[RMDB]
RNA sequence: GGGAACGACUCGAGUAGAGUCGAAAACCGCUACUCUUCGGAGUAGCGGAUACAUCUCGGGUCGGGGCCUUACCGUAGGACCAACGGUAAGGCCAGAGAUGAAGGGAGAGAUUUUCGAAUCUCUCAAACCUGAUUAAACGUUCGCGUUUAAUCAGGUAAAAGAAACAACAACAACAAC
Reactivity to 2A3 in 0.01 (KOAc 150mM, MgCl2 10mM, bicine 150mM(pH8.5), 24C), signal-to-noise 2, nucleotides 027 to 126: c000c010g000c020u000a000c000u020c010u020u100c240g120g010a000g000u010a000g000c010g010g000a000u010a000c020a060u020c000u000c000g030g000g010u040c080g040g050g020g000c000c010u010u000a000c000c000g020u020a060g050g160a060c040c040a020a020c000g000g010u000a000a000g000g000c010c000a000g000a000g000a020u190g070a070a060g190g080g020a000g000a010g000a000u030u010u020u080c120g070a100a010u000c000u020c000u020c030a000a040
Reactivity to DMS in 0.01 (KOAc 150mM, MgCl2 10mM, bicine 150mM(pH8.5), 24C), signal-to-noise 2, nucleotides 027 to 126: c000c000g000c000u000a000c000u000c000u000u000c160g010g010a010g010u000a000g010c000g000g000a020u000a050c060a060u000c000u000c000g020g000g010u000c060g000g000g000g010c000c000u010u000a000c000c000g000u000a010g000g010a100c160c090a010a050c010g010g010u000a000a010g000g010c000c000a000g000a050g000a060u000g010a140a120g010g010g010a010g030a030g020a040u000u000u000u030c170g010a030a030u000c000u000c000u000c020a010a080